Chemical mapping of a 177-nucleotide RNA with DMS and 2A3. Values are in units of 0.01, from 0 to 300, in steps of 10. It was measured as part of the RMDB library OK2TRN. For DMS the reverse transcriptase was MarathonRT.

RNA sequence: GGGAACGACUCGAGUAGAGUCGAAAACCAUCUGGAGGACUCGAUGGAUUCGCACGAUGUGGCGCCGGUCGUCAAGGCCGGCCCCCGCCGGGUGCAAGCGCAGCGCGUGCUCAGCGAUGAUGAUUGACACUCCCAAACGAUUCGUCGUUUGGGAGUGAAAAGAAACAACAACAACAAC
Reactivity to DMS in 0.01 (KOAc 150mM, MgCl2 10mM, bicine 150mM(pH8.5), 24C), signal-to-noise 2, nucleotides 027 to 126: c010c010a070u000c040u020g010g010a120g000g000a070c060u000c040g000a030u000g030g010a160u000u000c080g030c060a080c050g010a060u000g030u010g030g030c300g010c000c000g000g000u000c010g010u010c300a100a240g000g020c010c000g040g000c000c040c010c000c010g000c090c040g000g000g010u000g000c110a050a040g000c090g000c060a060g000c040g000c160g030u000g010c030u000c020a090g000c080g000a070u000g010a060u000g010a180u000u000g000a300
Reactivity to 2A3 in 0.01 (KOAc 150mM, MgCl2 10mM, bicine 150mM(pH8.5), 24C), signal-to-noise 1, nucleotides 027 to 126: c000c000a050u020c040u080g110g030a060g030g050a050c010u020c060g040a050u050g050g030a060u050u030c030g000c050a040c030g110a040u050g130u220g110g000c050g000c010c000g000g020u010c010g000u030c110a140a180g000g000c020c000g000g000c000c000c000c000c010g000c040c010g000g060g020u020g020c060a020a040g020c100g040c030a040g070c000g000c030g030u010g040c000u000c020a040g040c030g060a040u060g020a030u040g040a070u070u100g030a020